This 177-nucleotide RNA was probed chemically with 2A3 and DMS.
RNA sequence: GGGAACGACUCGAGUAGAGUCGAAAAGAUAUGGACCCUGGCGAGGCGAAGAACGCUUUCGGAAACGAAAGCGGGAGCUCCCCACCGCUCUAAGGGUCCUAAGUCAAAACGUGCCUUCGGGCACGAAGAUUGUCAAUACCUUCGGGUAUUGACAAUCAAAAGAAACAACAACAACAAC
Reactivity to 2A3 in 0.01 (KOAc 150mM, MgCl2 10mM, bicine 150mM(pH8.5), 24C), signal-to-noise 1, nucleotides 027 to 126: g010a010u070a020u120g000g010a010c000c010c000u000g010g000c060g090a120g080g120c110g010a110a020g030a080a000c020g020c000u000u000u010c010g000g030a070a040a030c030g000a000a000a020g000c070g000g020g030a060g120c060u100c060c020c010c000a130c090c000g060c010u050c060u180a050a060g010g010g010u000c000c000u010a000a000g020u000c010a020a000a070a100c000g020u010g000c010c000u020u020c200g050g020g030c010a000c000g000a000a010
Reactivity to DMS in 0.01 (KOAc 150mM, MgCl2 10mM, bicine 150mM(pH8.5), 24C), signal-to-noise 3, nucleotides 027 to 126: g000a030u000a250u000g000g000a010c000c000c000u000g000g010c300g020a090g010g010c160g000a050a080g010a300a210c000g010c010u000u000u000c000g040g000a090a090a070c000g000a000a000a000g000c000g020g000g000a200g010c050u000c020c020c010c030a170c180c020g000c010u000c120u000a140a020g000g010g010u000c000c000u000a020a030g000u020c030a050a050a100a170c010g010u000g000c010c000u000u010c190g030g000g010c000a010c000g000a030a040
Conditions: 150 mM KOAc, 10 mM MgCl2 and 150 mM bicine (pH 8.5), 24 C.